[RMDB]
RNA sequence: GGGAACGACUCGAGUAGAGUCGAAAAGUAUACGGUAAGAAAACUGGUAACACACCAGACGGACGUAAAGCUGGCGAACCAUUUGCUCCAGGUGCAAACCCAAUGCAUGGCCGUGACCAAAAAGGUGCACGGCGGAUGGGUUCGCCCAUCCGCCGUGAAAAGAAACAACAACAACAAC
Reactivity to DMS in 0.01 (KOAc 150mM, MgCl2 10mM, bicine 150mM(pH8.5), 24C), signal-to-noise 1, nucleotides 027 to 126: g000u020a050u000a020c040g000g050u020a150a020g010a130a090a160a070c000u000g010g000u000a240a200c300a250c220a040c000c000a080g000a150c180g000g060a020c080g070u030a000a050a130g020c060u020g020g000c010g040a000a020c030c040a050u000u010u000g000c050u000c060c300a020g000g000u000g010c000a080a090a060c010c020c000a020a260u110g000c060a000u000g010g000c050c000g010u010g080a000c000c000a060a080a090a070a120g000g000u000g010
Reactivity to 2A3 in 0.01 (KOAc 150mM, MgCl2 10mM, bicine 150mM(pH8.5), 24C), signal-to-noise 2, nucleotides 027 to 126: g020u000a040u000a100c040g000g070u150a040a040g060a160a140a090a000c000u000g030g000u040a180a050c050a040c000a040c190c000a020g210a060c030g000g040a000c070g210u120a080a000a000g020c040u060g000g000c030g000a000a030c000c010a050u060u030u190g000c010u000c020c040a070g050g000u010g080c000a000a170a140c050c000c120a050a180u000g080c000a050u050g050g000c000c000g000u010g020a050c010c000a060a240a260a100a140g020g020u050g130